[RMDB]
RNA sequence: GGGAACGACUCGAGUAGAGUCGAAAACACUUGAAGAAGGUGGCCUAGUCCUCAAACAAUGGUGUACAACAACAUGUUCAUUUGGUGAUCCAGGUGAUAUUAUGUCUACAACUUCAGGAAUGCGUUGAGUGGUGCUUUAAUUCGUUAAAGCACCACUAAAAGAAACAACAACAACAAC
Reactivity to 2A3 in 0.01 (KOAc 150mM, MgCl2 10mM, bicine 150mM(pH8.5), 24C), signal-to-noise 1, nucleotides 027 to 126: c000a010c020u050u080g030a030a070g090a070a030g050g040u010g020g030c010c000u010a040g020u020c010c020u060c030a110a080a050c040a030a120u120g040g060u060g000u080a090c060a050a010c000a020a010c000a080u060g050u000u060c010a090u010u040u040g070g050u060g150a110u020c000c030a020g000g040u000g030a010u000a020u210u070a040u060g030u000c010u010a060c030a090a050c060u060u060c020a010g100g050a190a060u080g020c080g110u080u130g080
Reactivity to DMS in 0.01 (KOAc 150mM, MgCl2 10mM, bicine 150mM(pH8.5), 24C), signal-to-noise 3, nucleotides 027 to 126: c070a040c040u000u000g030a110a090g040a070a100g030g020u000g000g030c060c030u000a150g000u010c030c030u010c110a080a130a080c110a100a080u000g000g060u010g010u000a050c170a050a060c170a050a030c030a070u000g000u000u000c000a010u000u010u000g000g000u000g020a140u000c030c020a010g000g020u000g000a030u010a080u010u010a050u000g010u000c040u000a060c050a030a060c040u000u010c060a010g000g000a070a050u000g020c250g030u000u000g000